[RMDB]
Source: RMDB library TTRDEL, as collected in RNAgym. This 177-nucleotide RNA was probed chemically with 2A3 and DMS.
RNA sequence: GGGAACGACUCGAGUAGAGUCGAAAAGAUAUGGAACGACUACCCACCGAACUACAGCUAAGGGUCGGAAACGACCCGAAGCUGCGAGGUCGUUCCUAAGUCAAAGUCCAGGGUUCGCCCUGGACAACAUGUUAAAAUGCUUCGGCAUUUUAACAUGAAAAGAAACAACAACAACAAC
Reactivity to 2A3 in 0.01 (KOAc 150mM, MgCl2 10mM, bicine 150mM(pH8.5), 24C), signal-to-noise 4, nucleotides 027 to 126: g070a040u240a170u300g000g010a020a000c010g010a000c020u200a240c020c030c080a020c030c030g030a080a070c080u170a070c220a010g000c000u030a030a050g000g000g000u000c000g000g020a080a050a010c020g010a000c000c050c020g000a020a000g000c000u000g020c010g010a020g000g000u000c010g010u010u000c000c000u020a070a020g150u120c150a170a090a060g010u020c000c010a000g010g020g000u050u060c220g150c030c000c000u000g000g000a000c000a000a000
Reactivity to DMS in 0.01 (KOAc 150mM, MgCl2 10mM, bicine 150mM(pH8.5), 24C), signal-to-noise 6, nucleotides 027 to 126: g010a130u000a130u010g010g010a030a020c000g010a010c010u000a120c030c020c040a300c140c040g010a070a070c070u020a170c010a010g010c010u010a050a300g000g000g010u010c000g010g000a070a080a180c010g010a020c000c010c000g000a100a020g010c010u000g000c020g000a060g020g010u000c000g010u000u000c000c000u010a030a050g010u010c110a070a080a120g000u000c000c010a000g010g000g010u000u010c270g010c010c000c000u000g010g010a000c000a010a100
Background:
Reactivities are given for positions 27 through 126. The 2A3 profile rests on 9,672 reads.